[RMDB]
RNA sequence: GGGAACGACUCGAGUAGAGUCGAAAAAGGACCGGGAUGGACGAACCUCUGGUGUGUCAGUUGUUCUGCCAAGAGCACGGCUGAUUAGCUACGUUCGGAAGUGAUAACCGCUGAAAGCAUCUAAGCGCUACGGGGUAAGAUUCGUCUUACCCCGUAGAAAAGAAACAACAACAACAAC
Reactivity to 2A3 in 0.01 (KOAc 150mM, MgCl2 10mM, bicine 150mM(pH8.5), 24C), signal-to-noise 1, nucleotides 027 to 126: a000g040g000a020c010c030g000g030g060a030u030g000g070a010c000g000a000a020c020c000u000c040u030g000g000u050g040u070g010u020c000a000g010u030u010g050u150u040c090u080g030c020c030a160a020g060a020g010c030a010c030g010g000c030u010g000a020u000u070a010g000c020u020a010c160g010u000u000c000g000g010a010a020g020u040g060a070u080a170a070c050c000g000c040u050g070a140a060a020g070c000a030u000c030u120a120a020g070c050g010
Reactivity to DMS in 0.01 (KOAc 150mM, MgCl2 10mM, bicine 150mM(pH8.5), 24C), signal-to-noise 6, nucleotides 027 to 126: a050g020g000a140c050c030g000g010g010a050u000g000g000a210c020g010a040a020c010c000u010c020u000g010g010u000g000u010g010u000c010a030g020u000u000g000u010u000c070u000g020c160c230a110a090g010a090g030c050a070c270g010g000c010u000g000a040u000u000a260g010c000u000a040c110g010u000u000c010g000g010a130a070g030u010g000a110u010a100a140c140c040g010c020u010g000a050a070a100g000c060a030u000c020u000a120a070g000c080g000
Structure probing data (2A3 and DMS) for a 177-nucleotide construct. The RNA was probed in 150 mM KOAc, 10 mM MgCl2 and 150 mM bicine (pH 8.5) at 24 C. Values cover nucleotides 27 to 126.